[RMDB]
RNA sequence: GGGAACGACUCGAGUAGAGUCGAAAACUCGAGGAAGACAUCUCCCAAGAAGAAGCGGGAACAAUCUCAAGAAGAGGAGGAUUCCCCGAGACGCUGACGGAAACCCCGGGAACAAGGAAACAGGAGGAUACUACUGUGUUCGCACAGUAGAAAAGAAACAACAACAACAAC
Reactivity to 2A3 in 0.01 (KOAc 150mM, MgCl2 10mM, bicine 150mM(pH8.5), 24C), signal-to-noise 9, nucleotides 027 to 129: c020u020c020g010a020g020g020a040a030g040a020c020a130u030c050u030c030c010c010a020a020g050a030a010g040a040a000g030c070g020g010g010a030a020c030a050a080u040c030u020c070a040a070g070a040a010g020a050g020g000a010g000g010a020u050u080c010c000c000c000g020a020g000a020c050g000c090u060g030a030c050g030g000a040a040a050c000c000c010c010g010g000g000a030a030c030a040a020g040g000a040a040a020c040a030g000g020a000g020g010a030u060a090
Reactivity to DMS in 0.01 (KOAc 150mM, MgCl2 10mM, bicine 150mM(pH8.5), 24C), signal-to-noise 9, nucleotides 027 to 129: c010u030c040g010a030g000g000a030a030g000a040c110a090u030c090u000c000c040c030a100a080g050a070a060g030a040a060g040c110g000g000g000a050a040c130a070a080u030c070u010c100a070a050g020a070a040g020a040g000g010a040g000g000a070u030u030c030c010c000c070g000a060g020a030c190g000c070u010g000a010c110g010g000a030a070a090c020c030c040c000g020g000g010a020a030c080a050a040g010g010a060a030a070c090a070g020g020a040g030g010a030u040a080
About this RNA
The record gives the reactivity of an RNA of 170 nucleotides to 2A3 and DMS. The 2A3 profile rests on 56,671 reads. The RNA was probed in 150 mM KOAc, 10 mM MgCl2 and 150 mM bicine (pH 8.5) at 24 C. It was measured as part of the RMDB library 15KLIB.